[RMDB]
RNA sequence: GGGAACGACUCGAGUAGAGUCGAAAACUCUGCAUAUUCGUAUGCAGAGAAAUAACGGUCGGCUCAUGCAGCUAGUCGAACAUGCUGCUCGACCUUUUCGUAAAAACCGGAGGUUCGCCUCCGGUAACGUAGAUUCGAUAUUCGUAUCGAAUCUACGAAAAGAAACAACAACAACAAC
Reactivity to 2A3 in 0.01 (KOAc 150mM, MgCl2 10mM, bicine 150mM(pH8.5), 24C), signal-to-noise 3, nucleotides 027 to 126: c010u000c000u000g030c010a000u030a040u050u070c250g110u060a000u010g000c000a000g000a000g020a010a090a000u060a040a020c050g010g000u000c000g010g000c040u020c240a030u190g000c020a000g020c030u100a040g200u230c070g050a060a030c030a030u080g010c000u020g000c050u070c040g000a000c000c010u020u020u020u030c030g010u090a000a040a000a020a020c000c000g010g000a000g020g040u060u100c210g090c060c000u010c000c010g000g000u000a000a000
Reactivity to DMS in 0.01 (KOAc 150mM, MgCl2 10mM, bicine 150mM(pH8.5), 24C), signal-to-noise 5, nucleotides 027 to 126: c010u000c000u000g000c000a000u000a020u000u020c210g010u000a000u000g000c000a010g000a000g010a010a060a030u000a070a100c240g010g010u000c000g000g000c090u010c070a040u010g010c000a300g020c030u000a130g020u010c110g000a080a240c080a070u000g000c110u000g010c030u010c020g000a030c000c010u000u000u000u000c050g010u010a060a040a050a070a070c000c000g010g000a010g000g010u010u010c230g010c000c010u000c000c000g000g010u010a000a020

Description
This 177-nucleotide RNA was probed chemically with 2A3 and DMS. The reactions ran in a buffer of 150 mM KOAc, 10 mM MgCl2 and 150 mM bicine (pH 8.5), at 24 C. The 2A3 profile rests on 4,570 reads. The DMS profile rests on 4,797 reads.